Source: RMDB library M2RFPK, as collected in RNAgym. Chemical mapping of a 207-nucleotide RNA with DMS and 2A3. For 2A3, 9,971 sequencing reads were counted. 2A3 is a SHAPE reagent: it acylates the 2'-hydroxyl of flexible nucleotides of all four kinds. For DMS, 6,212 sequencing reads were counted.
[RMDB]
RNA sequence: GGGAACGACUCGAGUAGAGUCGAAAAGUUUACGCUCCAAGAUCGGUGGAUAGCAGCCCUAUCAAUAUCUAGGAGAACUGUGCUAUGUUUAGAAGAUUAGGUAGUCUCUAAACAGAACAAUUUACCACAUACGUUAGGACGUUCGCGUCCUAACGAAGUUUUAAACGUAGUUCGCUACGUUUAAAACAAAAGAAACAACAACAACAAC
Reactivity to DMS in 0.01 (KOAc 150mM, MgCl2 10mM, bicine 150mM(pH8.5), 24C), signal-to-noise 3, nucleotides 027 to 156: g010u010u010u000a070c080g000c010u000c010c010a130a070g010a030u010c130g030g060u000g000g010a110u000a070g030c070a290g010c110c130c010u010a100u000c030a090a120u000a110u010c060u000a180g030g020a300g010a090a080c050u000g010u000g010c030u000a140u000g030u000u000u000a010g010a100a070g020a030u000u000a160g030g010u000a150g040u010c000u000c000u000a010a020a010c020a020g000a050a040c020a030a120u010u010u000a090c030c000a040c070a100u000a130c020g020u000u000a010g010g000a020c010g050u000u000c300g020c030g030u000c020c000u010a000a010c020g000a010a090
Reactivity to 2A3 in 0.01 (KOAc 150mM, MgCl2 10mM, bicine 150mM(pH8.5), 24C), signal-to-noise 9, nucleotides 027 to 156: g010u020u060u120a060c050g010c010u010c010c010a020a020g020a050u070c110g110g170u100g120g040a030u020a040g040c070a020g020c040c010c000u020a030u030c040a080a050u050a020u160c020u060a040g010g020a030g010a050a050c090u100g010u020g050c040u050a020u090g010u000u000u010a090g010a300a010g000a050u070u060a070g080g100u080a030g030u010c000u000c000u000a000a000a000c010a000g030a040a020c050a030a030u070u090u100a060c030c020a060c030a150u190a060c020g000u000u000a000g000g000a000c010g010u020u030c160g020c010g070u000c000c000u000a000a000c000g000a000a010
Values cover nucleotides 27 to 156.